[RMDB]
RNA sequence: GGGAACGACUCGAGUAGAGUCGAAAAGAAAGAAAGAAAGAAGCCGUCUCUGCUAGUCUCACGGUAACCACGUUGAAAUCGCAACGAAAGAAGCUCGCACUCAACUUCAACGGCUUAACGAGUGCAAAAAACUUACUGAUCUUCGGAUCAGUAAGAAGAUAGGAUUAAUGUUCGCAUUAAUCCUAUCAAAAGAAACAACAACAACAAC
Reactivity to DMS in 0.01 (KOAc 150mM, MgCl2 10mM, bicine 150mM(pH8.5), 24C), signal-to-noise 2, nucleotides 027 to 156: g000a130a050a100g000a150a100a200g010a050a100a140g030a150a160g040c000c000g070u000c010u000c040u000g030c120u000a090g000u010c010u000c010a110c050g010g010u010a070a130c040c040a060c080g050u000u000g010a040a060a070u000c140g000c010a040a050c010g000a030a070a240g000a150a090g020c060u000c110g000c010a040c060u010c020a060a160c020u010u000c010a050a030c050g020g000c000u000u020a010a100c300g000a060g050u000g040c010a000a010a030a050a050a100c000u000u000a010c010u010g000a030u000c000u000u030c270g020g000a010u000c000a000g000u010a000a000g020a030a050
Reactivity to 2A3 in 0.01 (KOAc 150mM, MgCl2 10mM, bicine 150mM(pH8.5), 24C), signal-to-noise 2, nucleotides 027 to 156: g070a030a080a010g070a030a130a000g050a060a190a010g050a050a020g000c030c010g050u020c050u020c050u130g010c040u020a020g050u060c020u010c050a010c010g030g000u040a060a060c020c010a040c070g010u030u070g070a090a090a080u160c060g000c090a000a010c040g050a060a060a140g010a010a010g050c090u180c210g000c050a000c000u000c000a060a110c020u030u020c010a040a010c010g010g000c000u010u000a010a020c030g000a010g000u010g000c010a040a040a000a000a000a120c000u000u000a000c000u000g000a000u010c000u000u050c140g090g000a000u000c000a000g000u000a000a000g000a000a000

Structure probing data (DMS and 2A3) for a 207-nucleotide construct. The data come from the RNA Mapping Database (RMDB), library M2RFPK. The DMS profile rests on 3,037 reads. DMS adducts were read by reverse transcription with MarathonRT. The RNA was probed in 150 mM KOAc, 10 mM MgCl2 and 150 mM bicine (pH 8.5) at 24 C.